[RMDB]
RNA sequence: GGGAACGACUCGAGUAGAGUCGAAAAGAUUAGGCAGAUAACAACUAUUACGCGUCUUGCCACUGUAUUGUAAAGAAAACAACAAGAUAUAAGUUUAAUACACCUACGCGACAAGAUGAAUCAGCAACAUCCCUACGGAUUUCGAUCCGUAGGGAUGAAAAGAAACAACAACAACAAC
Reactivity to DMS in 0.01 (KOAc 150mM, MgCl2 10mM, bicine 150mM(pH8.5), 24C), signal-to-noise 1, nucleotides 027 to 126: g020a120u000u010a090g030g020c010a000g060a170u020a140a140c170a100a080c140u000a080u000u020a060c210g050c050g010u000c050u020u000g020c000c000a080c030u000g000u010a050u010u010g000u030a000a080a090g000a180a040a000a020c060a060a070c010a030a060g020a050u020a180u000a070a100g000u000u000u040a000a160u000a030c040a030c090c000u000a030c060g000c110g000a050c070a020a030g060a000u000g000a010a110u020c160a090g000c180a050a150
Reactivity to 2A3 in 0.01 (KOAc 150mM, MgCl2 10mM, bicine 150mM(pH8.5), 24C), signal-to-noise 1, nucleotides 027 to 126: g100a010u070u130a000g070g000c050a010g060a040u080a070a030c040a090a010c040u070a010u140u130a050c100g000c000g040u000c000u020u030g000c020c040a100c060u150g040u020a110u080u040g020u070a180a160a050g240a080a050a110a030c080a030a010c010a090a000g080a160u080a080u050a080a020g050u030u040u060a130a030u060a010c010a000c000c000u010a010c080g000c020g050a080c000a040a020g000a020u060g020a050a080u070c030a010g010c000a040a030